[RMDB]
RNA sequence: GGGAACGACUCGAGUAGAGUCGAAAAUGUGGGACGAUAACUCCAAUCCUUUGACUAAUAUUUUGGAACUCUUUCGUCUGCUGUCCAUUAGUCAACCUCGGACCAGCAUCUCAACUGGGUGCGCUCGCUUACACAGCGGUUUCGACCGCUGUGUAAGAAAAGAAACAACAACAACAAC
Reactivity to DMS in 0.01 (KOAc 150mM, MgCl2 10mM, bicine 150mM(pH8.5), 24C), signal-to-noise 2, nucleotides 027 to 126: u000g030u000g010g010g000a030c020g010a030u000a050a190c120u000c010c020a040a080u000c110c100u000u000u020g000a080c070u000a060a050u000a130u000u000u000u020g010g000a110a060c050u000c140u000u000u000c050g020u000c020u000g000c030u000g010u000c030c010a110u000u000a030g000u000c030a010a110c250c060u000c050g020g010a070c080c030a020g020c070a060u000c030u000c050a080a080c190u000g000g000g010u000g020c040g010c110u000c060g000
Reactivity to 2A3 in 0.01 (KOAc 150mM, MgCl2 10mM, bicine 150mM(pH8.5), 24C), signal-to-noise 2, nucleotides 027 to 126: u160g020u120g040g000g010a020c000g000a040u030a140a000c030u000c030c020a030a060u030c020c040u090u070u100g070a060c030u050a030a170u050a210u150u070u090u080g020g030a050a030c010u000c060u170u160u060c040g020u000c020u060g040c020u050g070u030c000c000a040u020u070a040g080u010c030a040a000c070c000u080c010g010g010a030c020c020a020g040c020a040u010c040u050c070a090a190c060u110g020g000g020u030g000c060g000c000u080c050g060

Notes
This 177-nucleotide RNA was probed chemically with DMS and 2A3. The data come from the RNA Mapping Database (RMDB), library OK2TRN. Values cover nucleotides 27 to 126. For 2A3 the reverse transcriptase was SuperScript II with manganese.